[RMDB]
RNA sequence: GGGAACGACUCGAGUAGAGUCGAAAAGACAGUCCUGAUUCCUGCCCUGCCCACCCAGGUGGUUCUACAUUGUUGUGGUGCCCAUUGACCGUGUGGGCGGGAGCAUGCUGACGCCAAGGUGGAGCACACCCGAGGAACUGGAGCUGGACGAGGUACCGGCUGAAAUCUUCUUCGGAAGAUUUCAGCCAAAAGAAACAACAACAACAAC
Reactivity to 2A3 in 0.01 (KOAc 150mM, MgCl2 10mM, bicine 150mM(pH8.5), 24C), signal-to-noise 1, nucleotides 027 to 156: g060a010c000a030g000u040c000c000u150g030a300u000u020c000c000u030g000c000c000c000u000g050c020c000c000a040c040c030c000a000g060g010u050g000g000u000u150c000u020a030c020a070u080u170g190u270u100g000u120g000g060u070g000c010c000c000a080u020u250g100a220c060c040g000u010g000u000g040g000g000c000g000g000g000a000g030c000a020u110g000c000u090g060a090c080g020c040c020a060a150g020g000u010g090g020a130g070c100a020c010a030c060c010c050g040a070g060g020a040a050c040u040g000g010a070g110c020u040g010g090a080c060g000a050g020g060u060a020c080c000